This 207-nucleotide RNA was probed chemically with 2A3 and DMS. The DMS profile rests on 3,881 reads. Source: RMDB library OK3TST, as collected in RNAgym. The reactions ran in a buffer of 150 mM KOAc, 10 mM MgCl2 and 150 mM bicine (pH 8.5), at 24 C. For 2A3, 2,085 sequencing reads were counted. For DMS the reverse transcriptase was MarathonRT.
RNA sequence: GGGAACGACUCGAGUAGAGUCGAAAAGACGGUGCCUUUUGUGAAUGCGACGCAGGUUGGUGUGGGGACGACGAGUUCUACGUAUCCUUUCGAUGUUUUGGGUAUUGUACGCGCUGGUAGCACAGUUGCAUCAUCGAUUUACUUGACGAAUAGUGAAGUUAGUCAGAGAGUUCGCUCUCUGACUAACAAAAGAAACAACAACAACAAC
Reactivity to 2A3 in 0.01 (KOAc 150mM, MgCl2 10mM, bicine 150mM(pH8.5), 24C), signal-to-noise 3, nucleotides 027 to 156: g060a010c050g020g020u060g010c010c000u040u050u080u060g080u040g040a100a050u070g020c010g050a030c040g010c040a010g030g020u050u060g010g030u050g010u040g020g030g000g010a020c000g000a000c030g040a020g030u060u040c020u050a030c040g050u050a100u070c000c000u060u050u040c040g070a100u050g070u020u060u090u070g040g000g000u070a060u060u190g050u040a060c030g000c000g000c020u000g050g030u070a020g020c020a010c000a070g010u080u120g030c040a050u060c020a040u020c020g060a020u030u070u040a040c010u030u060g040a030c030g060a120a090u100a060g050u050g030a100a030
Reactivity to DMS in 0.01 (KOAc 150mM, MgCl2 10mM, bicine 150mM(pH8.5), 24C), signal-to-noise 2, nucleotides 027 to 156: g010a080c070g030g020u010g010c030c000u000u000u000u080g030u010g030a070a060u000g000c080g010a100c060g020c030a050g000g020u000u000g040g000u010g030u010g020g000g030g010a130c010g010a100c070g000a100g000u000u000c050u000a040c050g040u000a040u000c020c010u000u000u000c080g050a150u000g020u000u010u030u000g000g010g020u000a040u010u040g060u030a090c110g060c070g000c020u000g010g010u000a080g010c000a070c030a100g020u000u000g000c020a210u010c050a100u010c030g010a150u000u000u000a070c080u000u000g010a110c050g010a090a060u010a130g000u020g010a170a180